[RMDB]
RNA sequence: GGGAACGACUCGAGUAGAGUCGAAAAUCAGCCUGAGACGUGAUGCGUAGCCGAUUGAGGCGAAUUCAGUGAUCCUAUGCUGCCGAGAAAAGCCUCUAGCGAGCUUUCACACGGCCCGUACCCCAAAAUUCCUUCGUUAGUUCGCUAACGAAGGAAUAAAAGAAACAACAACAACAAC
Reactivity to DMS in 0.01 (KOAc 150mM, MgCl2 10mM, bicine 150mM(pH8.5), 24C), signal-to-noise 4, nucleotides 027 to 126: u020c090a100g000c020c020u020g010a080g010a090c070g030u000g000a050u000g040c090g000u020a120g010c000c030g010a100u020u010g020a110g000g020c000g000a100a120u000u010c030a070g010u010g000a100u010c060c030u000a110u020g020c000u010g000c090c030g010a140g010a080a040a080a260g000c030c010u000c020u000a120g000c080g000a100g030c020u000u000u010c050a050c070a060c040g000g000c000c010c010g000u020a090c050c000c000c050a060a060a070
Reactivity to 2A3 in 0.01 (KOAc 150mM, MgCl2 10mM, bicine 150mM(pH8.5), 24C), signal-to-noise 4, nucleotides 027 to 126: u080c010a010g030c010c010u130g050a060g020a050c040g020u060g050a080u050g060c030g040u060a010g010c020c000g090a100u050u160g050a060g010g000c020g010a030a020u080u040c010a000g040u010g090a070u100c010c020u050a060u190g010c010u030g010c020c030g060a060g040a070a080a000a000g010c010c010u020c020u020a010g030c010g050a020g000c000u020u090u060c020a030c010a010c020g020g000c000c010c010g070u090a080c000c000c000c000a010a040a020